This 177-nucleotide RNA was probed chemically with 2A3 and DMS. DMS adducts were read by reverse transcription with MarathonRT.
RNA sequence: GGGAACGACUCGAGUAGAGUCGAAAAUAAACUCCACAAAUACCUAUCAGACUACAGGCAUUUAAUCUACAGUUGAAGGUAAACAAAACUGGGGUCUAGUUUAGGCGAAAAGAACGUUUUACAAAACGUUUGUAUCUCGAUUCGUCGAGAUACAAACAAAAGAAACAACAACAACAAC
Reactivity to 2A3 in 0.01 (KOAc 150mM, MgCl2 10mM, bicine 150mM(pH8.5), 24C), signal-to-noise 5, nucleotides 027 to 126: u110a020a040a000c030u020c000c020a070c080a080a140a020u090a020c010c010u060a100u100c010a010g030a070c010u030a020c040a020g020g000c020a050u070u120u100a110a110u070c040u050a050c080a080g050u030u060g130a070a000g090g020u080a080a070a000c050a010a060a010a000c010u020g010g000g000g030u000c010u010a040g030u090u000u050a020g030g000c050g060a040a130a000a030g050a050a010c030g010u010u000u060u130a090c090a010a060a020a000c040
Reactivity to DMS in 0.01 (KOAc 150mM, MgCl2 10mM, bicine 150mM(pH8.5), 24C), signal-to-noise 3, nucleotides 027 to 126: u010a040a050a080c090u010c020c010a110c240a080a090a150u000a030c000c000u000a090u000c070a050g000a010c000u000a070c090a010g040g000c120a060u060u050u040a060a100u030c050u010a110c090a080g030u000u020g000a080a030g000g000u000a020a050a120c180a040a030a080a090c090u000g010g000g010g050u000c010u000a020g000u020u000u010a060g010g000c090g020a030a040a050a060g010a050a040c060g000u010u000u000u000a060c290a140a040a090a050c100
About this RNA: The data come from the RNA Mapping Database (RMDB), libraries RFM100 and RFMREP.